[RMDB]
Structure probing data (2A3 and DMS) for a 177-nucleotide construct.
The DMS profile rests on 9,452 reads.
DMS (dimethyl sulfate) methylates the pairing face of unpaired adenines and cytosines.
The RNA was probed in 150 mM KOAc, 10 mM MgCl2 and 150 mM bicine (pH 8.5) at 24 C.
For DMS the reverse transcriptase was MarathonRT.
For 2A3 the reverse transcriptase was SuperScript II with manganese.
RNA sequence: GGGAACGACUCGAGUAGAGUCGAAAAUGAAACGAACCAUAGUAGGAGACAGUUGAAUCAGUCUGCACAUGAUUCGAGUGGAUAAUUUUCUUUGGGCGAUAUAUCUAUUGACUUUUAUCACGAUCAGAUGCUUCUGUUAAUUCGUUAACAGAAGCAUAAAAGAAACAACAACAACAAC
Reactivity to 2A3 in 0.01 (KOAc 150mM, MgCl2 10mM, bicine 150mM(pH8.5), 24C), signal-to-noise 4, nucleotides 027 to 126: u120g010a050a010a030c020g010a000a020c000c020a020u020a080g050u040a100g000g040a000g020a010c040a030g060u100u120g160a120a230u120c010a000g050u020c010u140g020c040a030c010a060u040g000a020u030u010c020g020a040g050u130g040g040a020u020a050a050u070u070u040u050c020u040u030u030g020g000g000c030g070a030u060a020u010a020u240c030u020a060u010u070g020a020c010u060u020u070u030a030u040c020a030c090g050a080u090c020a010g030
Reactivity to DMS in 0.01 (KOAc 150mM, MgCl2 10mM, bicine 150mM(pH8.5), 24C), signal-to-noise 6, nucleotides 027 to 126: u010g000a090a120a220c040g010a040a050c020c010a020u000a100g020u000a110g020g010a040g010a030c020a050g030u010u010g020a110a090u010c060a040g000u000c040u000g010c040a050c040a040u000g000a040u000u000c020g000a120g010u000g010g010a040u010a040a030u000u010u000u000c030u010u000u000g000g010g010c140g020a080u000a070u000a070u010c040u010a040u000u010g000a040c040u000u000u000u000a020u010c040a050c060g010a120u010c120a080g010